[RMDB]
RNA sequence: GGGAACGACUCGAGUAGAGUCGAAAAUUGCGGGCUACCACUUGUAGCUACUGAAGAUGGAAAGAUCGUUGGAAUACAUAGUUUGUCAAAUGUGUCAAACACACAAAAUUAUUUCACUGACUUUCCGUCCUAAAAAUACAUUCGUGUAUUUUUAGGAAAAAGAAACAACAACAACAAC
Reactivity to 2A3 in 0.01 (KOAc 150mM, MgCl2 10mM, bicine 150mM(pH8.5), 24C), signal-to-noise 9, nucleotides 027 to 126: u140u120g060c080g020g000g000c000u010a010c010c070a160c160u080u300g010u010a010g020c010u060a140c050u110g080a080a040g070a080u150g000g020a000a010a000g060a300u010c010g010u030u020g000g000a010a000u010a010c090a040u090a080g100u010u020u020g060u040c070a090a150a220u180g100u020g030u130c050a040a120a010c020a010c010a000c030a060a060a050a040u060u010a000u000u010u000c010a010c020u040g000a000c000u000u000u000c000c010g010
Reactivity to DMS in 0.01 (KOAc 150mM, MgCl2 10mM, bicine 150mM(pH8.5), 24C), signal-to-noise 9, nucleotides 027 to 126: u030u030g010c120g000g010g000c010u000a010c010c280a150c230u040u030g010u000a010g000c010u000a100c070u020g000a090a100g000a070u020g000g000a010a000a010g000a070u010c010g010u000u010g000g000a000a010u000a010c300a070u020a080g010u000u000u010g020u000c080a090a120a140u020g020u030g010u000c100a050a040a090c030a090c210a080c240a040a040a060a060u020u000a000u000u000u000c000a010c030u000g000a020c010u000u000u000c000c010g010

This 177-nucleotide RNA was probed chemically with 2A3 and DMS.
For 2A3, 36,157 sequencing reads were counted.
For 2A3 the reverse transcriptase was SuperScript II with manganese.
DMS adducts were read by reverse transcription with MarathonRT.
It was measured as part of the RMDB library OK1LIB.
Conditions: 150 mM KOAc, 10 mM MgCl2 and 150 mM bicine (pH 8.5), 24 C.
For DMS, 29,409 sequencing reads were counted.